[RMDB]
RNA sequence: GGGAACGACUCGAGUAGAGUCGAAAAGAAGAACUUCUUCGAACUAAAUCGUGGCGCGCUUGCUGCUUGCGAGGGCCUCGAUGUCGAGGAGUUGUUAACUCACUACGUCGUCUAUGUGUUCAGCAAGGUCUAGAGGUGAGUAGUAGUAGGGUAGAGCUCAACACGGGUAUUUCGAUACCCGUGUUGAAAAAGAAACAACAACAACAAC
Reactivity to 2A3 in 0.01 (KOAc 150mM, MgCl2 10mM, bicine 150mM(pH8.5), 24C), signal-to-noise 2, nucleotides 027 to 156: g080a040a000g020a030a000c000u070u080c000u110u090c000g040a070a040c060u190a300a080a000u000c010g010u000g010g020c060g000c080g040c180u040u040g000c060u050g050c070u250u300g000c020g000a020g010g080g000c000c000u020c030g000a000u010g000u000c000g000a000g010g010a000g000u000u000g020u080u080a100a060c010u020c020a060c040u060a020c000g070u030c010g000u010c050u030a180u040g100u040g040u050u100c010a010g020c050a090a070g050g010u000c020u110a060g000a030g100g000u040g050a020g000u020a010g000u000a000g000u020a000g000g000g000u020a040g040a020g010c030
Reactivity to DMS in 0.01 (KOAc 150mM, MgCl2 10mM, bicine 150mM(pH8.5), 24C), signal-to-noise 1, nucleotides 027 to 156: g000a070a110g030a040a060c050u000u000c030u020u000c010g000a070a210c070u000a090a060a070u010c030g070u000g000g000c000g050c070g000c020u030u000g000c040u000g080c250u000u000g020c050g020a070g050g000g020c000c020u030c020g010a050u000g010u000c000g000a050g040g050a030g040u010u000g020u030u020a090a090c040u000c000a140c070u000a060c020g040u020c040g050u040c020u000a070u000g000u030g010u000u000c030a150g000c030a180a110g000g020u000c030u000a120g000a150g020g000u000g000a120g050u010a070g050u000a080g030u000a050g000g020g070u010a120g000a110g030c110